[RMDB]
RNA sequence: GGGAACGACUCGAGUAGAGUCGAAAAUGAAAACUCUUGUAAACACGCAUUUAUGGUCUUGCUACACACUCUUUACUCGAUUACAGGGUAUGCGUAGGCAUCAAAUUGAGAUUAAGUGCAGGCAGGAAUUAGUAUGCGAGUUCGCUCGCAUACUAAUAAAAGAAACAACAACAACAAC
Reactivity to 2A3 in 0.01 (KOAc 150mM, MgCl2 10mM, bicine 150mM(pH8.5), 24C), signal-to-noise 8, nucleotides 027 to 126: u200g040a020a030a050a040c040u050c030u070u060g080u180a090a130a040c070a030c090g050c040a110u020u140u130a140u170g080g010u020c010u010u030g010c010u050a020c040a010c000a000c070u060c030u030u040u150a120c020u040c050g070a070u050u120a090c080a130g100g020g100u210a020u040g020c010g070u080a070g190g040c000a030u010c030a060a040a080u050u090g020a030g030a060u050u130a100a010g010u010g050c050a030g060g000c020a010g000g000a030
Reactivity to DMS in 0.01 (KOAc 150mM, MgCl2 10mM, bicine 150mM(pH8.5), 24C), signal-to-noise 7, nucleotides 027 to 126: u040g010a110a060a060a090c050u000c030u010u020g000u020a050a060a090c160a080c150g010c070a070u020u000u030a060u010g010g010u010c010u000u010g000c010u000a090c210a300c030a040c030u000c090u010u020u010a060c010u000c030g000a030u000u010a110c230a150g010g010g000u060a010u000g010c010g020u050a030g030g000c020a010u000c030a070a030a020u000u000g000a040g010a180u000u010a030a030g000u000g010c170a170g000g010c010a020g010g000a020
An RNA of 177 nucleotides, treated with 2A3 and DMS and read out base by base. Values cover nucleotides 27 to 126. The 2A3 profile rests on 8,764 reads. Source: RMDB library OK1LIB, as collected in RNAgym.